About this RNA: The record gives the reactivity of an RNA of 177 nucleotides to 2A3 and DMS. The DMS profile rests on 1,382 reads. 2A3 adducts were read by reverse transcription with SuperScript II with manganese. DMS adducts were read by reverse transcription with MarathonRT.
RNA sequence: GGGAACGACUCGAGUAGAGUCGAAAAGAUAUGGAAUGUAUAGAACUAUAAUCUACUCAUCUUCGGAAACGAAGAUGAGGUAGGUAGUUCGUACAUUCCUAAGUCAAAAUCGCAGUUCGCUGCGAAACUUUCCUUACUCGUUCGCGAGUAAGGAAAGAAAAGAAACAACAACAACAAC
Reactivity to 2A3 in 0.01 (KOAc 150mM, MgCl2 10mM, bicine 150mM(pH8.5), 24C), signal-to-noise 2, nucleotides 027 to 126: g030a030u040a090u100g000g020a010a010u000g030u010a010u080a300g000a040a000c020u010a020u100a300a300u080c000u010a010c000u010c010a010u000c000u020u000c000g060g010a090a050a050c000g020a000a020g000a000u020g000a010g000g010u000a000g000g000u020a010g010u000u000c000g010u000a000c000a010u000u000c000c000u000a090a000g030u000c020a000a040a040a300u010c040g000c000a000g010u090u250c250g120c090u000g010c030g000a020a010a000
Reactivity to DMS in 0.01 (KOAc 150mM, MgCl2 10mM, bicine 150mM(pH8.5), 24C), signal-to-noise 2, nucleotides 027 to 126: g010a050u000a300u020g010g000a020a000u000g000u000a000u000a230g020a000a050c000u010a030u030a300a110u000c010u010a050c000u000c000a000u000c000u000u000c000g020g010a060a140a220c000g000a010a000g000a030u000g000a030g020g020u000a000g000g000u000a000g020u010u000c000g000u000a020c000a030u010u000c000c000u000a050a070g020u010c000a140a060a110a110u000c000g010c010a030g000u000u040c250g030c030u000g000c000g000a000a070a150